The record gives the reactivity of an RNA of 177 nucleotides to DMS. Reactivities are given for positions 27 through 126.
[RMDB]
RNA sequence: GGGAACGACUCGAGUAGAGUCGAAAACUAUUUACGUUUGAGAAAUGGGGUGACGCAGUAGGAUAAGAUGUGCGCACUAUUGGAUGUGCGUCUAAGCACUUAGGCAUGCUUGAUAGGCAAAUCCGUAGAGGAGGGGUAUGUUCGCAUACCCCUCCUCAAAAGAAACAACAACAACAAC
Reactivity to DMS in 0.01 (KOAc 150mM, MgCl2 10mM, bicine 150mM(pH8.5), 24C), signal-to-noise 1, nucleotides 027 to 126: c010u000a030u000u000u000a090c100g030u000u030u000g000a230g000a020a050a100u000g020g000g060g000u010g000a080c040g000c070a070g030u000a140g010g020a150u000a110a070g010a090u010g040u000g000c020g000c090a060c020u000a110u010u010g010g010a010u000g000u000g020c020g020u000c070u000a040a130g030c020a030c020u000u000a130g020g010c120a030u000g010c010u000u010g000a080u010a110g020g000c090a030a130a080u000c010c030g050u010a100
The reactions ran in a buffer of 150 mM KOAc, 10 mM MgCl2 and 150 mM bicine (pH 8.5), at 24 C.